[RMDB]
RNA sequence: GGGAACGACUCGAGUAGAGUCGAAAAGAUAUGAUGACAUUGUCACAAAGAUCACAAGGGACACAGAGUUGACUUUUGCUCAAGGUGGAACGGCAAAGCUCUAUAGACAAGAUGAGAAACCGUGAACCCAAUUAAGAGUAUUCGUACUCUUAAUUGGAAAAGAAACAACAACAACAAC
Reactivity to DMS in 0.01 (KOAc 150mM, MgCl2 10mM, bicine 150mM(pH8.5), 24C), signal-to-noise 9, nucleotides 027 to 126: g010a100u010a050u010g000a110u010g000a050c050a150u020u030g010u000c030a040c050a060a100a080g000a070u020c030a070c100a070a060g000g000g010a090c070a050c080a080g010a090g010u010u010g010a070c060u000u020u010u000g010c050u010c070a070a080g010g010u000g010g010a100a040c060g010g000c050a050a110a100g000c020u000c020u010a100u010a090g000a090c210a070a070g010a080u010g000a040g000a070a080a100c040c020g000u000g010a100a100c160
Reactivity to 2A3 in 0.01 (KOAc 150mM, MgCl2 10mM, bicine 150mM(pH8.5), 24C), signal-to-noise 9, nucleotides 027 to 126: g050a030u160a040u180g120a080u040g010a020c080a160u090u230g020u020c010a000c030a030a100a030g080a070u080c030a030c030a110a080g040g030g020a020c020a000c020a070g060a010g080u060u050g100a130c010u050u060u120u130g020c010u020c040a030a030g080g010u050g030g040a060a020c010g000g010c030a050a020a030g010c000u000c010u030a060u030a040g070a050c080a110a030g020a100u150g020a020g040a060a040a010c020c000g010u030g040a010a030c010

An RNA of 177 nucleotides, treated with DMS and 2A3 and read out base by base. 2A3 adducts were read by reverse transcription with SuperScript II with manganese. DMS adducts were read by reverse transcription with MarathonRT. The data come from the RNA Mapping Database (RMDB), libraries RFM100 and RFMREP.